[RMDB]
RNA sequence: GGGAACGACUCGAGUAGAGUCGAAAACGCCGAAGCGCAUAUGUGGGCUGUCGACAAGCCCAUGCACCCGUCGCUGGUGCGCGACAUCCUCGAGGGCGUGAACGCCAAGUUACGCGAACUCAAGGGGCUCGGCCUGAUCAUCGAUGCCCAGGCCUGGACAGAGCGUAUGGUUCGCCAUACGCUCUGUAAAAGAAACAACAACAACAAC
Reactivity to 2A3 in 0.01 (KOAc 150mM, MgCl2 10mM, bicine 150mM(pH8.5), 24C), signal-to-noise 1, nucleotides 027 to 156: c060g010c000c030g110a140a060g020c060g000c120a010u090a120u300g050u000g010g000g000c010u000g060u090c030g070a050c030a080a000g030c010c010c000a000u050g000c010a000c000c060c060g170u110c030g100c120u040g010g010u090g000c010g010c000g040a040c000a070u060c000c040u040c040g000a020g020g030g030c000g010u050g110a040a000c020g020c100c100a130a000g020u050u080a060c020g030c060g060a140a030c010u020c070a010a060g060g010g010g000c020u030c030g000g000c000c000u060g050a070u150c020a010u140c030g260a130u160g000c000c000c000a000g080g030c060c010u050g030g030